[RMDB]
The record gives the reactivity of an RNA of 177 nucleotides to DMS and 2A3. The data come from the RNA Mapping Database (RMDB), library OK1LIB. The reactions ran in a buffer of 150 mM KOAc, 10 mM MgCl2 and 150 mM bicine (pH 8.5), at 24 C. Reactivities are given for positions 27 through 126. 2A3 adducts were read by reverse transcription with SuperScript II with manganese. For DMS, 1,863 sequencing reads were counted.

RNA sequence: GGGAACGACUCGAGUAGAGUCGAAAAACCCCCUCUAUGUCUUCGCAGGUGCCCAGCGUCAGCAGGAUGCGCCUAUAGCGCCCGGCCUCCUCCCCUGUCGACCAGAGGACGCAGGAUAUCUGCAGGAAUGGCUGCAUUUAUUCGUAAAUGCAGCCAUAAAAGAAACAACAACAACAAC
Reactivity to DMS in 0.01 (KOAc 150mM, MgCl2 10mM, bicine 150mM(pH8.5), 24C), signal-to-noise 2, nucleotides 027 to 126: a090c030c000c000c010c050u040c010u020a080u000g000u010c000u000u040c080g000c070a000g000g030u000g030c050c030c060a080g050c060g020u020c100a150g040c030a060g000g040a130u040g000c090g030c010c140u030a140u000a040g020c080g000c030c150c050g030g030c030c000u000c030c000u010c020c000c030c000u020g000u000c090g000a290c100c090a020g020a060g060g000a120c000g010c010a020g000g000a090u020a110u020c010u000g000c040a090g000g000a110
Reactivity to 2A3 in 0.01 (KOAc 150mM, MgCl2 10mM, bicine 150mM(pH8.5), 24C), signal-to-noise 3, nucleotides 027 to 126: a000c030c010c000c000c000u010c040u110a100u170g120u020c010u020u050c120g000c040a010g020g000u020g010c000c010c020a050g000c020g020u020c010a020g010c020a030g050g040a060u090g040c040g020c070c000u150a180u090a060g060c030g060c000c000c030g030g010c000c010u050c000c000u040c000c010c020c000u010g090u100c070g070a100c050c000a020g050a040g140g000a010c010g000c010a010g000g010a040u060a010u040c000u020g010c010a020g020g060a060